[RMDB]
RNA sequence: GGGAACGACUCGAGUAGAGUCGAAAACGAGAUGAGUUCGCUCAUCUCGAAAGAAGCGCGGGCGUGACUCGGUCAGAGCAUGACAGGCGCUGCGGUCACGAAAAAGUGGUGUGUUCGCACACCACAAGAUAUCACCGAACUUCGGUUCGGUGAUAUCAAAAGAAACAACAACAACAAC
Reactivity to 2A3 in 0.01 (KOAc 150mM, MgCl2 10mM, bicine 150mM(pH8.5), 24C), signal-to-noise 2, nucleotides 027 to 126: c030g020a010g020a020u020g000a000g050u050u110c170g100c050u000c000a000u030c000u000c000g000a000a020a000g050a050a010g040c050g000c080g070g050g000c020g040u020g060a140c030u050c140g110g070u180c130a010g020a010g040c030a040u080g100a090c040a050g090g040c010g000c000u020g000c010g030g050u080c050a050c070g110a070a070a050a030a000g000u000g020g010u000g000u000g020u000u090c210g050c090a000c000a000c000c000a000c000a010a010
Reactivity to DMS in 0.01 (KOAc 150mM, MgCl2 10mM, bicine 150mM(pH8.5), 24C), signal-to-noise 2, nucleotides 027 to 126: c030g000a010g000a000u000g020a010g020u000u020c290g000c010u000c000a010u000c000u000c000g000a010a040a080g040a110a040g020c040g060c030g000g010g030c010g020u000g000a100c010u010c040g000g010u010c210a100g010a040g000c010a030u000g000a110c100a090g010g010c010g010c020u010g010c050g000g010u010c020a060c090g000a060a040a030a120a130g010u000g010g020u010g000u000g010u010u010c180g000c000a010c000a000c000c000a010c000a060a020